The record gives the reactivity of an RNA of 177 nucleotides to 2A3 and DMS. For DMS, 4,461 sequencing reads were counted. Source: RMDB library OK2TRN, as collected in RNAgym. The RNA was probed in 150 mM KOAc, 10 mM MgCl2 and 150 mM bicine (pH 8.5) at 24 C.
[RMDB]
RNA sequence: GGGAACGACUCGAGUAGAGUCGAAAAGGAGUGCUACCGAAAGGUAGCACUCCAACAAAUCGGUGUAGGUGCAGCCCGUCGUACACCGUGCGGCACAGCGGAAACGCUGAUGUCGUAUACAGGGCUACUACUCAUACGUGUUCGCACGUAUGAGUAGAAAAGAAACAACAACAACAAC
Reactivity to 2A3 in 0.01 (KOAc 150mM, MgCl2 10mM, bicine 150mM(pH8.5), 24C), signal-to-noise 2, nucleotides 027 to 126: g010g000a000g010u000g020c010u010a010c020c020g070a100a060a040g020g000u010a010g000c010a000c000u000c000c000a000a010c000a000a010a000u120c000g010g000u010g010u020a060g060g040u050g040c030a010g000c050c000c000g050u050c020g010u010a000c010a000c010c000g000u010g000c000g000g000c010a010c000a010g000c010g030g000a090a060a000c010g030c010u000g000a080u010g000u010c000g000u000a000u020a010c020a020g000g000g000c000u010a040
Reactivity to DMS in 0.01 (KOAc 150mM, MgCl2 10mM, bicine 150mM(pH8.5), 24C), signal-to-noise 3, nucleotides 027 to 126: g010g030a040g030u000g020c000u000a010c000c000g020a150a150a170g000g030u000a000g020c000a000c000u010c000c000a020a030c070a030a050a060u000c000g010g020u000g000u010a040g000g020u010g010c140a060g000c010c000c000g020u000c050g010u000a030c000a010c000c010g020u000g000c000g000g010c000a010c010a010g000c000g000g000a140a120a160c010g010c000u000g000a060u010g020u010c000g020u010a030u020a070c130a110g000g000g030c010u010a220